[RMDB]
Source: RMDB library ARCHII, as collected in RNAgym. The record gives the reactivity of an RNA of 207 nucleotides to 2A3. For 2A3, 1,778 sequencing reads were counted. High 2A3 reactivity points to a flexible backbone, as in loops and unpaired stretches. 2A3 adducts were read by reverse transcription with SuperScript II with manganese. Conditions: 150 mM KOAc, 10 mM MgCl2 and 150 mM bicine (pH 8.5), 24 C.
RNA sequence: GGGAACGACUCGAGUAGAGUCGAAAAAGCAGGGGCAUUAAGGUGGUGUGGAUGUUUCCUGACGGAUUAUGGGCCUGGGCCUGUAUGUGCCACUUGCCGGCCUGCCCGUUCCAAGUUGGUUGUGGCUGGUGGGGCUCGGGCGAAGGCCUGGGCCUCUCCUCACUUUAAGGUUCGCCUUAAAGUGAGGAAAAGAAACAACAACAACAAC
Reactivity to 2A3 in 0.01 (KOAc 150mM, MgCl2 10mM, bicine 150mM(pH8.5), 24C), signal-to-noise 3, nucleotides 027 to 156: a000g040c050a010g000g010g000g010c000a030u050u070a130a050g070g040u040g000g030u030g040u020g080g020a050u010g040u020u070u090c020c020u060g070a090c050g030g030a040u050u120a120u270g070g010g010c010c000u050g000g020g020c000c020u050g060u100a090u180g100u090g030c000c030a100c090u010u040g010c010c010g030g000c010c010u010g000c000c000c020g030u100u060c030c040a100a060g080u130u130g140g000u100u060g110u090g060g000c020u010g020g020u050g040g080g000g000c040u030c040g020g010g000c010g030a020a010g010g020c000c010u000g000g000g000c000c000u000c000u000